[RMDB]
RNA sequence: GGGAACGACUCGAGUAGAGUCGAAAACGAGACCAGCCUGGGCCACAUAGCGAGACCCUGUCUCUAAUUCCAUUGAGCUGGAAUCUAGGUGGCUGCAGCCUUUAGGAAAGGGAUCUGGCCAGCUCUGCUAGAGACACUGUGCAACUUUAGUCAGGUACCACUAAUUUAGGUUCGCCUAAAUUAGUGGAAAAGAAACAACAACAACAAC
Reactivity to DMS in 0.01 (KOAc 150mM, MgCl2 10mM, bicine 150mM(pH8.5), 24C), signal-to-noise 2, nucleotides 027 to 156: c080g010a130g020a060c020c020a090g010c090c030u000g000g000g010c000c040a080c070a120u000a080g030c110g020a100g000a090c020c020c000u000g000u010c010u010c010u000a040a080u010u000c030c030a140u010u010g040a120g040c100u000g000g010a070a040u000c040u000a120g020g050u000g000g020c010u010g050c030a150g020c030c020u000u000u010a150g000g010a140a110a060g000g010g010a100u000c040u010g010g030c000c030a100g030c020u010c010u000g010c010u010a050g000a090g020a090c030a090c020u000g050u000g010c020a140a060c010u000u030u010a100g010u000c050a030g040g020u000a130
Reactivity to 2A3 in 0.01 (KOAc 150mM, MgCl2 10mM, bicine 150mM(pH8.5), 24C), signal-to-noise 4, nucleotides 027 to 156: c040g020a000g050a070c010c020a000g030c010c000u030g000g050g000c020c000a020c010a050u100a030g050c020g040a030g040a060c040c040c160u110g020u000c000u000c000u010a080a110u140u030c040c040a030u040u170g060a030g050c020u020g000g030a030a040u060c040u040a040g040g050u010g050g000c020u090g020c010a020g060c000c010u090u100u140a100g070g040a100a030a020g050g000g010a040u060c030u050g010g010c000c000a010g000c000u000c020u040g040c010u040a020g010a010g030a070c020a030c070u070g030u060g050c050a070a100c040u100u110u080a040g040u090c040a040g030g020u100a060
About this RNA:
The record gives the reactivity of an RNA of 207 nucleotides to DMS and 2A3. For 2A3, 3,882 sequencing reads were counted. Values are in units of 0.01, from 0 to 300, in steps of 10. It was measured as part of the RMDB library OK3TST. DMS adducts were read by reverse transcription with MarathonRT. 2A3 is a SHAPE reagent: it acylates the 2'-hydroxyl of flexible nucleotides of all four kinds. High DMS reactivity at an A or C suggests that its Watson-Crick edge is free. The DMS profile rests on 3,425 reads.